Chemical mapping of a 177-nucleotide RNA with DMS and 2A3. Values cover nucleotides 27 to 126. The 2A3 profile rests on 2,318 reads. Values are in units of 0.01, from 0 to 300, in steps of 10.

RNA sequence: GGGAACGACUCGAGUAGAGUCGAAAAGAUAUGGACUGAUGUUACAGAACUACUGCAUAUCUCGGAAACGAGAUUUGCAGCUGUAACACAAUCAGUCCUAAGUCAAACAACGCGUUCGCGCGUUGAACUUCUGGAAAUCGUUCGCGAUUUCCAGAAGAAAAGAAACAACAACAACAAC
Reactivity to DMS in 0.01 (KOAc 150mM, MgCl2 10mM, bicine 150mM(pH8.5), 24C), signal-to-noise 1, nucleotides 027 to 126: g000a040u000a300u010g000g040a000c000u000g030a020u000g000u000u000a000c000a000g000a100a040c050u000a300c010u000g010c000a010u000a000u000c000u000c000g000g000a230a080a170c000g000a020g010a020u000u000u000g000c000a000g000c000u000g000u000a000a040c000a140c160a300a090u000c000a000g020u010c000c000u000a000a080g060u000c010a130a060a290c000a020a000c000g060c010g020u010u010c300g020c000g030c010g000u000u000g020a130a260
Reactivity to 2A3 in 0.01 (KOAc 150mM, MgCl2 10mM, bicine 150mM(pH8.5), 24C), signal-to-noise 1, nucleotides 027 to 126: g040a010u090a050u200g020g010a000c020u030g030a030u090g020u030u000a010c000a020g080a100a070c150u300a040c010u300g030c000a010u000a010u030c000u020c010g000g070a060a070a060c020g000a010g000a030u060u020u000g000c000a000g000c000u010g000u010a000a000c010a020c000a010a010u040c020a000g000u010c000c000u000a050a010g000u030c070a040a010a150c000a010a020c010g030c000g040u100u060c300g000c010g060c010g130u000u000g000a000a040